An RNA of 177 nucleotides, treated with DMS and 2A3 and read out base by base.
It was measured as part of the RMDB library OK1LIB.
Values cover nucleotides 27 to 126.
2A3 adducts were read by reverse transcription with SuperScript II with manganese.
For 2A3, 1,128 sequencing reads were counted.
The RNA was probed in 150 mM KOAc, 10 mM MgCl2 and 150 mM bicine (pH 8.5) at 24 C.
[RMDB]
RNA sequence: GGGAACGACUCGAGUAGAGUCGAAAAGAGAAGUGCGGAAAACGAAACGAAGCGAAACGGAACGCACAAAAACAAAAGCUUCGGAAACAAAACUUCGAAAGAAAUAAGGAUUAAUAUCCGAAAGAAACCGAAAUUAUUAGUUCGCUAAUAAUUUCGGAAAAGAAACAACAACAACAAC
Reactivity to DMS in 0.01 (KOAc 150mM, MgCl2 10mM, bicine 150mM(pH8.5), 24C), signal-to-noise 1, nucleotides 027 to 126: g000a080g020a040a070g000u000g000c140g010g030a060a070a070a120c050g010a160a150a170c050g000a060a080g000c010g000a180a140a160c070g000g000a090a080c070g000c100a050c130a050a110a150a070a080c050a050a030a200a300g000c020u000u000c000g000g030a170a050a100c080a030a060a130a030c090u000u000c040g010a120a020a140g030a030a100a090u010a080a080g000g000a010u030u050a110a050u010a110u020c000c000g010a000a030a120g010a010a010a040
Reactivity to 2A3 in 0.01 (KOAc 150mM, MgCl2 10mM, bicine 150mM(pH8.5), 24C), signal-to-noise 1, nucleotides 027 to 126: g230a000g010a160a040g040u020g030c000g000g000a110a080a000a000c000g000a110a050a000c010g000a080a000g010c050g080a090a040a020c000g020g030a100a000c010g000c040a000c030a150a020a000a060a000c090a030a130a000a010g060c000u010u070c030g030g030a120a030a000c060a050a130a070a040c110u030u020c020g090a090a000a000g010a010a030a010u060a050a040g020g000a000u060u040a100a060u100a040u180c010c010g000a000a100a000g050a050a080a030